Overview:
Structure probing data (2A3 and DMS) for a 177-nucleotide construct. For DMS the reverse transcriptase was MarathonRT. For 2A3 the reverse transcriptase was SuperScript II with manganese.
RNA sequence: GGGAACGACUCGAGUAGAGUCGAAAAUUCCUCGAUGCCGGAGUGCUGGAAGUCCAUAGCUCCGCGGGAGCGUGGCAAGCCUCACCGAUGCGUUAUCGUAAUCAAGGAUUGUCCAUGUCAUCAGAUGUACUAUAGUUUACUUCGGUAAACUAUAGUAAAAAGAAACAACAACAACAAC
Reactivity to 2A3 in 0.01 (KOAc 150mM, MgCl2 10mM, bicine 150mM(pH8.5), 24C), signal-to-noise 9, nucleotides 027 to 126: u020u010c000c000u010c020g030a030u070g030c040c030g040g010a060g010u110g020c020u020g050g040a160a060g110u060c010c000a030u040a110g000c000u010c000c020g110c070g110g090g020a050g010c010g000u000g000g000c000a010a010g020c000c000u040c040a090c040c060g030a030u050g020c030g070u120u120a140u250c040g020u050a050a080u050c030a050a030g030g010a040u030u060g040u030c020c020a020u040g050u040c020a050u020c030a050g040a120u170g060
Reactivity to DMS in 0.01 (KOAc 150mM, MgCl2 10mM, bicine 150mM(pH8.5), 24C), signal-to-noise 9, nucleotides 027 to 126: u010u000c010c000u000c090g010a040u010g010c060c030g010g000a040g020u010g000c160u000g010g010a200a120g010u020c010c010a030u020a210g010c010u000c010c010g030c190g010g010g010a080g000c010g020u000g000g000c010a080a040g010c010c010u000c090a090c160c090g000a060u010g010c060g010u010u030a080u010c030g010u000a060a050u010c060a110a060g000g000a050u000u000g010u020c010c020a050u000g000u000c040a050u010c050a100g010a120u020g010